[RMDB]
Source information: The data come from the RNA Mapping Database (RMDB), library TTRDES. Chemical mapping of a 177-nucleotide RNA with DMS and 2A3. Reactivities are given for positions 27 through 126. Conditions: 150 mM KOAc, 10 mM MgCl2 and 150 mM bicine (pH 8.5), 24 C. DMS adducts were read by reverse transcription with MarathonRT.
RNA sequence: GGGAACGACUCGAGUAGAGUCGAAAAGAUAUGGAACUAUCGUAGUUUGCGAUGAAACACCAUCGGAAACGAUGGUGUGGAGCAACUACGAGUAGUUCCUAAGUCAAAAGCGUGGUUCGCCACGCAACUCCCACGAUACGUUCGCGUAUCGUGGGAGAAAAGAAACAACAACAACAAC
Reactivity to DMS in 0.01 (KOAc 150mM, MgCl2 10mM, bicine 150mM(pH8.5), 24C), signal-to-noise 1, nucleotides 027 to 126: g010a170u000a300u000g020g000a000a030c000u010a010u010c000g020u000a010g000u000u020u000g060c000g000a070u010g000a150a230a040c010a000c000c000a000u000c000g040g000a130a150a150c010g000a060u000g020g020u000g000u000g000g000a060g050c000a060a000c000u000a000c000g000a020g010u000a020g000u000u000c000c000u000a050a100g010u060c020a150a090a140a180g030c000g010u000g010g010u000u000c290g000c000c000a020c000g010c020a020a090
Reactivity to 2A3 in 0.01 (KOAc 150mM, MgCl2 10mM, bicine 150mM(pH8.5), 24C), signal-to-noise 2, nucleotides 027 to 126: g010a000u080a030u220g000g000a000a020c000u000a000u030c010g000u010a000g000u030u300u230g220c270g200a300u040g090a020a000a000c010a000c000c000a030u010c010g000g030a120a010a010c010g000a000u020g100g000u000g000u000g000g000a000g000c000a000a000c000u010a000c000g030a000g000u000a000g000u000u000c000c000u010a040a000g040u000c030a010a060a150a000g000c000g000u000g030g080u110u220c300g010c100c010a000c010g060c000a010a000